[RMDB]
RNA sequence: GGGAACGACUCGAGUAGAGUCGAAAAGUGAGUGGACACCCGCUUUAUUCACUGGGGACGACAACUCUGGGGAGAAAAGGGAGGAUCGGAUGGGAAGAGUAUAUCCUACGGGAAUCCGCGAUCCCCUUCGUAAGAAGUGGUUCGCCACUUCUUACGAAAAAGAAACAACAACAACAAC
Reactivity to 2A3 in 0.01 (KOAc 150mM, MgCl2 10mM, bicine 150mM(pH8.5), 24C), signal-to-noise 1, nucleotides 027 to 126: g000u000g000a000g000u020g050g000a000c010a130c040c050c010g070c050u080u080u040a110u030u070c020a040c050u020g030g000g010g000a000c020g010a020c020a110a070c000u000c060u070g000g010g010g000a090g080a000a160a050a000g080g000g020a020g030g000a040u060c050g000g080a070u090g060g020g000a040a020g050a020g120u050a060u000a020u050c000c000u010a010c010g000g040g000a020a060u000c010c010g100c000g070a070u030c000c000c000c000u030
Reactivity to DMS in 0.01 (KOAc 150mM, MgCl2 10mM, bicine 150mM(pH8.5), 24C), signal-to-noise 2, nucleotides 027 to 126: g010u000g000a040g050u020g020g020a060c040a100c060c120c120g030c180u010u000u000a110u020u000c010a000c030u010g030g010g010g000a120c040g010a040c070a080a090c130u010c040u010g000g000g000g000a090g010a010a100a040a090g010g010g040a040g030g010a170u020c020g000g000a110u000g000g000g010a030a100g000a110g000u000a030u010a080u000c020c010u010a120c010g000g050g010a180a120u020c030c020g030c050g000a110u000c010c000c000c060u000